[RMDB]
RNA sequence: GGGAACGACUCGAGUAGAGUCGAAAACGUCGUAUACGCUGGGCAGAACAGCGCCAGUAGGGAGCUUCCUGAAGCGCGCACGGGAAGCAUCGAUCUACUGGACGCUUCCCUGCCUGUGCUGAAGCGCGCACGGCAACCGAAAGGUGCGAGGAGCUAAGAUAAAGACUUUGUUCGCAAAGUCUUUAUCAAAAGAAACAACAACAACAAC
Reactivity to DMS in 0.01 (KOAc 150mM, MgCl2 10mM, bicine 150mM(pH8.5), 24C), signal-to-noise 2, nucleotides 027 to 156: c070g000u010c050g000u000a170u010a070c050g020c030u030g000g010g020c030a050g010a080a130c070a030g010c030g050c010c030a060g000u000a020g010g010g000a050g020c030u000u010c000c010u000g000a040a040g010c020g020c030g020c010a300c020g000g000g000a040a020g040c010a090u000c120g020a070u000c020u000a040c040u000g030g000a050c030g020c020u010u000c120c090c000u000g010c030c020u000g010u000g000c030u010g000a080a040g040c010g000c040g060c000a300c030g000g000c010a090a130c010c020g000a080a100a170g030g040u000g010c040g000a140g020g010a180g000c030u000a070a300
Reactivity to 2A3 in 0.01 (KOAc 150mM, MgCl2 10mM, bicine 150mM(pH8.5), 24C), signal-to-noise 3, nucleotides 027 to 156: c050g070u050c060g040u220a120u040a180c040g020c010u020g000g000g010c000a000g020a150a060c030a080g020c000g010c000c000a000g000u010a000g000g020g000a010g000c000u020u000c000c000u030g050a160a080g010c010g000c000g000c010a000c020g000g000g000a000a000g020c010a020u300c010g010a010u000c000u000a000c000u020g000g050a090c010g000c000u020u000c010c010c000u000g000c000c000u020g000u000g000c000u050g020a130a030g000c010g000c000g000c030a020c020g000g000c000a010a000c010c010g070a120a080a020g000g010u010g030c030g010a090g050g070a080g040c070u170a120a080

Source: RMDB library RNAMAK, as collected in RNAgym. The record gives the reactivity of an RNA of 207 nucleotides to DMS and 2A3. For DMS, 4,457 sequencing reads were counted. For 2A3, 5,852 sequencing reads were counted. For DMS the reverse transcriptase was MarathonRT.